[RMDB]
RNA sequence: GGGAACGACUCGAGUAGAGUCGAAAAGUAUGGAGAGUUCGCUCUCCAUACAAAAAUCCUAAGUCGCUGAUGACCCGUGAUCGAAGAACGGUCGGAAACGACCGGGAGGCACGGCAAGGCGAUAUGGAAAAAAUAGUUUAGGUUCGCCUAAACUAAACUCAUGAAUCGUCUUCGGACGAUUCAUGAGAAAAGAAACAACAACAACAAC
Reactivity to 2A3 in 0.01 (KOAc 150mM, MgCl2 10mM, bicine 150mM(pH8.5), 24C), signal-to-noise 1, nucleotides 027 to 156: g000u000a010u000g000g000a000g000a000g040u110u070c120g050c040u000c010u000c000c000a000u000a000c000a000a000a010a000a000u050c020c010u040a190a040g010u000c010g050c010u050g040a250u130g020a180c060c010c020g030u020g020a300u210c000g050a240a020g010a120a040c020g030g010u000c000g010g020a150a080a020c000g000a000c000c000g010g000g010a040g020g000c000a000c020g020g000c040a050a030g040g000c010g010a040u050a050u090g010g130a060a000a000a000a020a140u050a020g000u040u000u010a000g030g060u010u010c220g080c020c020u020a020a000a000c000u020a030a040a000
This 207-nucleotide RNA was probed chemically with 2A3.
Source: RMDB library RNAMAK, as collected in RNAgym.
The reactions ran in a buffer of 150 mM KOAc, 10 mM MgCl2 and 150 mM bicine (pH 8.5), at 24 C.